[RMDB]
RNA sequence: GGGAACGACUCGAGUAGAGUCGAAAAGAUAUGGACACUUCCCAGGGCUACAUCGAUCAGCGAUCGGAAACGAUCGCUGGGAGUAGUUUGGGAGAGUGUCCUAAGUCAAAGCGUCGUUCGCGACGCAGUCCAAGGGAGUGUUCGCACUCCCUUGGACAAAAGAAACAACAACAACAAC
Reactivity to DMS in 0.01 (KOAc 150mM, MgCl2 10mM, bicine 150mM(pH8.5), 24C), signal-to-noise 2, nucleotides 027 to 126: g020a050u030a300u000g010g020a000c000a000c000u000u030c020c000c000a040g020g030g000c010u030a000c000a290u000c170g020a130u020c000a030g000c010g030a000u000c000g000g010a120a150a180c010g040a010u000c010g050c000u010g000g000g020a010g030u000a000g000u000u000u000g010g000g000a050g010a040g020u000g000u000c000c000u000a040a060g000u000c060a110a180a130g000c000g010u010c000g000u010u010c300g020c020g000a000c010g030c010a030
Reactivity to 2A3 in 0.01 (KOAc 150mM, MgCl2 10mM, bicine 150mM(pH8.5), 24C), signal-to-noise 2, nucleotides 027 to 126: g010a070u070a050u250g000g010a000c000a000c000u000u000c010c000c030a040g010g200g000c000u040a020c030a300u300c090g210a150u140c010a020g010c000g010a010u000c000g010g100a140a090a040c010g020a010u040c060g010c000u000g000g000g010a010g000u010a000g020u010u060u040g050g000g000a300g050a020g110u010g000u000c000c000u000a060a020g020u000c020a110a130a000g030c010g000u010c010g020u070u230c300g000c010g110a000c020g040c030a000